This 177-nucleotide RNA was probed chemically with 2A3 and DMS. The RNA was probed in 150 mM KOAc, 10 mM MgCl2 and 150 mM bicine (pH 8.5) at 24 C.

[RMDB]
RNA sequence: GGGAACGACUCGAGUAGAGUCGAAAAGAUAUGGAAUUAGGCACCGUGCGUUGAAAUCGGAAACGAUGGAGCACUGGUGAACUACCUAAUUCCUAAGUCAAAACCGUUCGGGUUCGCCCGAACGGAAGAGAUGAUAUACGUUCGCGUAUAUCAUCUCAAAAGAAACAACAACAACAAC
Reactivity to 2A3 in 0.01 (KOAc 150mM, MgCl2 10mM, bicine 150mM(pH8.5), 24C), signal-to-noise 4, nucleotides 027 to 126: g010a010u060a030u170g000g010a000a000u020u000a000g000g000c000a000c010c020g020u010g000c020g240u300u080g010a020a030a020u000c010g010g010a070a040a040c010g000a010u020g000g020a020g000c010a020c100u070g010g010u000g000a010a020c020u110a040c000c000u000a000a000u010u000c000c000u010a140a020g050u010c020a000a010a110a170c010c000g000u000u000c010g000g000g050u050u090c270g130c040c000c020g000a000a000c000g000g010a020a020
Reactivity to DMS in 0.01 (KOAc 150mM, MgCl2 10mM, bicine 150mM(pH8.5), 24C), signal-to-noise 4, nucleotides 027 to 126: g010a030u000a300u010g000g000a020a000u000u000a000g050g000c010a020c010c020g030u000g000c000g020u000u030g000a050a110a030u000c000g000g000a120a100a210c010g000a000u000g000g010a100g010c010a010c010u000g050g000u000g000a040a040c090u020a300c020c010u000a010a020u000u000c000c000u000a020a070g000u010c030a090a080a100a160c010c000g000u000u010c000g010g000g020u000u020c230g000c000c000c000g000a020a000c000g000g010a020a040
DMS adducts were read by reverse transcription with MarathonRT.